[RMDB]
RNA sequence: GGGAACGACUCGAGUAGAGUCGAAAACGUCCUUCCCUUUUCUUAUUAUUCCGAGGAUGUUUCCCAGCCAGGGAUUUUCAUCCUCGAGUUUCUUGAUGGUUCUCCUGCUCUUCCGGAGCUUUCUUUCGACCAGGGAACUUCGGUUCCCUGAAAAGAAACAACAACAACAAC
Reactivity to DMS in 0.01 (KOAc 150mM, MgCl2 10mM, bicine 150mM(pH8.5), 24C), signal-to-noise 5, nucleotides 027 to 129: c190g010u020c010c070u000u080c000c030c040u020u080u040u040c020u030u060a130u030u040a070u020u010c160c000g010a030g020g020a060u000g040u010u030u000c030c030c020a180g000c280c220a040g000g050g000a070u040u020u030u010c030a040u000c040c020u020c010g040a060g020u020u050u000c030u030u020g000a160u000g030g040u030u010c020u050c020c000u030g000c030u010c030u020u040c120c050g060g000a100g020c050u000u000u000c020u020u020u010c120g020a220c250
Reactivity to 2A3 in 0.01 (KOAc 150mM, MgCl2 10mM, bicine 150mM(pH8.5), 24C), signal-to-noise 5, nucleotides 027 to 129: c080g120u050c030c010u060u070c000c000c000u050u130u080u080c060u090u150a300u090u060a160u120u130c080c020g000a000g000g000a000u010g030u000u000u000c000c000c000a020g240c090c040a060g010g030g000a030u080u040u020u090c000a020u000c000c000u000c000g000a020g000u010u030u000c050u050u100g100a120u110g030g010u030u000c050u020c000c030u040g040c010u000c000u060u040c060c020g040g030a030g010c030u000u020u030c030u010u070u060c040g060a080c030

Structure probing data (DMS and 2A3) for a 170-nucleotide construct. 2A3 adducts were read by reverse transcription with SuperScript II with manganese. The 2A3 profile rests on 8,784 reads. Conditions: 150 mM KOAc, 10 mM MgCl2 and 150 mM bicine (pH 8.5), 24 C. For DMS, 13,604 sequencing reads were counted. As a SHAPE reagent, 2A3 marks flexible, mostly unpaired nucleotides at the ribose 2'-OH. DMS adducts were read by reverse transcription with MarathonRT.